[RMDB]
An RNA of 207 nucleotides, treated with DMS and 2A3 and read out base by base. For DMS, 5,569 sequencing reads were counted. Conditions: 150 mM KOAc, 10 mM MgCl2 and 150 mM bicine (pH 8.5), 24 C. As a SHAPE reagent, 2A3 marks flexible, mostly unpaired nucleotides at the ribose 2'-OH.

RNA sequence: GGGAACGACUCGAGUAGAGUCGAAAAGACGUGGAGGUUACGCGCCCUCCUUUGCGCGUAAGUACGUCGAAAUUCGGUGCUUGGGAUCGCACCGUUCGAUCCAUUUGAUAUCCGCUUUGUGCCGCGGUUGGGCAUUUACACUUACCCGAAAGGGGAAAAUCCCAUGAUAGUUCGCUAUCAUGGGAUUAAAAGAAACAACAACAACAAC
Reactivity to DMS in 0.01 (KOAc 150mM, MgCl2 10mM, bicine 150mM(pH8.5), 24C), signal-to-noise 2, nucleotides 027 to 156: g010a040c050g030u010g040g020a100g040g020u000u000a020c010g020c020g020c010c110c070u010c130c020u000u000u010g000c020g020c010g000u000a020a070g000u010a050c040g010u010c010g010a060a070a120u000u000c010g040g030u000g010c000u000u020g030g020g000a160u000c130g010c010a160c040c040g030u000u000c030g000a050u010c040c080a270u010u000u000g020a120u000a130u000c020c020g020c010u010u000u010g000u000g020c010c030g000c040g020g000u000u010g030g030g000c040a080u000u010u000a090c070a080c050u000u010a180c020c010c010g000a080a070a170g010g000g000g020a040a050
Reactivity to 2A3 in 0.01 (KOAc 150mM, MgCl2 10mM, bicine 150mM(pH8.5), 24C), signal-to-noise 4, nucleotides 027 to 156: g040a000c040g020u060g020g100a090g080g180u060u000a000c000g000c000g000c020c010c000u180c020c030u110u100u080g010c010g010c000g000u010a010a010g090u060a010c030g010u000c010g020a030a010a070u130u070c020g000g000u010g010c010u090u100g110g070g030a040u070c030g010c010a020c010c000g000u000u040c020g020a040u020c010c060a070u060u040u180g120a120u070a100u120c030c030g030c060u090u080u120g080u060g030c030c010g020c050g060g000u060u040g050g000g010c010a030u060u060u090a020c060a020c040u110u110a040c010c000c010g040a070a050a040g010g000g010g010a020a070